[RMDB]
RNA sequence: GGGAACGACUCGAGUAGAGUCGAAAAUUGGUGCUUGAUUUAUGCCAUCUCAUUUCCUUCUCAAACCACCCUUUGAAGUUGAUUGUACAUUUUACAGAAAAGGAAACUGAGGCUCGGAGAGGAGAAAGAGCUAAAUAUGGUUCGCCAUAUUUAGCUCAAAAGAAACAACAACAACAAC
Reactivity to DMS in 0.01 (KOAc 150mM, MgCl2 10mM, bicine 150mM(pH8.5), 24C), signal-to-noise 3, nucleotides 027 to 126: u030u000g010g020u000g000c120u010u000g010a170u010u010u000a120u010g020c080c030a080u020c020u000c060a140u000u010u010c000c000u000u000c020u010c040a060a090a120c070c110a130c190c030c010u000u000u000g020a300a160g020u000u000g000a080u000u000g000u010a150c160a080u010u010u000u000a010c090a030g010a200a010a050a010g000g000a100a070a120c120u000g020a050g020g030c190u000c150g040g000a050g000a040g000g000a020g010a050a100a160
Reactivity to 2A3 in 0.01 (KOAc 150mM, MgCl2 10mM, bicine 150mM(pH8.5), 24C), signal-to-noise 2, nucleotides 027 to 126: u060u030g020g000u040g040c050u060u160g130a220u200u120u150a090u210g000c030c000a050u000c010u000c020a040u000u070u010c000c000u010u080c020u000c000a060a130a050c030c030a040c020c030c000u020u000u040g010a020a010g000u010u020g060a080u020u150g090u090a080c030a150u060u120u060u040a010c010a010g020a020a070a000a000g020g000a000a000a060c060u070g020a040g060g010c090u070c110g040g000a040g010a020g000g030a020g020a010a110a010